[RMDB]
Record summary
An RNA of 177 nucleotides, treated with DMS and read out base by base. DMS adducts were read by reverse transcription with MarathonRT. Source: RMDB library VIROID, as collected in RNAgym. For DMS, 416 sequencing reads were counted.
RNA sequence: GGGAACGACUCGAGUAGAGUCGAAAAUCGCCCCGAGAGGGGAUCAAUGGUAAAGAGGCGAGGAAAUCGGUAGAAACUACUCCCAAGAAGGACCAGAAGGGGAGAUCAGGAAGAGGAGGAUCCCCAGCCUUUUCAAAAAGUUCGCUUUUUGAAAAGGAAAAGAAACAACAACAACAAC
Reactivity to DMS in 0.01 (KOAc 150mM, MgCl2 10mM, bicine 150mM(pH8.5), 24C), signal-to-noise 1, nucleotides 027 to 126: u000c130g020c000c020c000c040g000a260g010a230g010g000g000g050a010u010c020a040a130u010g010g000u000a000a150a010g010a160g000g000c160g000a070g000g010a060a200a160u000c050g010g000u060a090g000a090a040a060c060u010a120c040u000c000c000c000a110a180g000a200a110g010g020a060c080c040a020g000a090a140g010g010g000g000a040g010a160u000c200a060g010g000a040a080g020a060g020g000a110g000g000a190u000c000c000c000c110a200g000